[RMDB]
RNA sequence: GGGAACGACUCGAGUAGAGUCGAAAAAAGAAGAGUUUCAGGAGUACAUCAGUGAUCACAGUGACUCGUUGCUUGAAUUCUUUAUUCGUAAUUACAUUGGCGUUGAAUACCAAGCAAAAUCACAGUCUAUAGGUAGCGUGUUCGCACGCUACCUAUAAAAAGAAACAACAACAACAAC
Reactivity to DMS in 0.01 (KOAc 150mM, MgCl2 10mM, bicine 150mM(pH8.5), 24C), signal-to-noise 1, nucleotides 027 to 126: a050a070g020a090a000g000a040g000u000u000u000c070a040g000g000a030g040u000a060c080a100u010c110a030g010u000g000a040u000c090a150c120a120g060u040g000a020c130u000c120g020u000u000g020c020u000u000g010a080a030u000u000c020u000u000u010a060u040u010c030g010u000a030a060u000u000a110c300a210u020u030g010g020c010g020u000u040g000a020a070u010a150c180c000a000a000g000c060a050a050a020a030u000c020a020c050a260g000u000c100
An RNA of 177 nucleotides, treated with DMS and read out base by base. Conditions: 150 mM KOAc, 10 mM MgCl2 and 150 mM bicine (pH 8.5), 24 C. Source: RMDB library OK2TRN, as collected in RNAgym.